RNA sequence: GGGAACGACUCGAGUAGAGUCGAAAAAAUUUAAAGUAAGGCUGAUUAUAUAACACGAUUUUUGUGAACUUGUCAUCGCUAUGAUGACUGGUAAAACGAUAUUGCCUUAUUCACAUCGUAAGAAUUCGUCUAUCUUAUCCUUCGGGAUAAGAUAGACAAAAGAAACAACAACAACAAC
Reactivity to 2A3 in 0.01 (KOAc 150mM, MgCl2 10mM, bicine 150mM(pH8.5), 24C), signal-to-noise 1, nucleotides 027 to 126: a010a000u080u120u040a070a040a000g000u000a000a000g000g000c030u050g050a150u180u090a090u020a040u040a150a060c030a000c040g110a020u070u070u040u150u110g050u010g020a030a030c000u000u020g050u000c000a000u010c000g060c180u200a040u300g000a020u000g000a030c000u010g000g000u060a050a020a050a020c080g000a020u010a010u120u100g000c000c000u010u030a010u000u070c020a040c060a150u100c130g150u090a220a050g010a110a040u070u070c030
Reactivity to DMS in 0.01 (KOAc 150mM, MgCl2 10mM, bicine 150mM(pH8.5), 24C), signal-to-noise 1, nucleotides 027 to 126: a060a070u000u000u000a120a070a080g040u000a090a030g010g000c000u000g000a080u000u010a040u000a070u000a070a220c070a030c020g000a150u000u000u010u000u010g010u000g060a160a060c000u010u000g000u010c000a020u000c000g000c270u010a040u010g020a010u000g010a030c000u000g000g000u000a030a040a050a030c150g000a070u000a020u000u000g040c000c000u000u000a010u000u000c160a060c270a110u000c100g000u000a090a020g000a090a240u000u010c130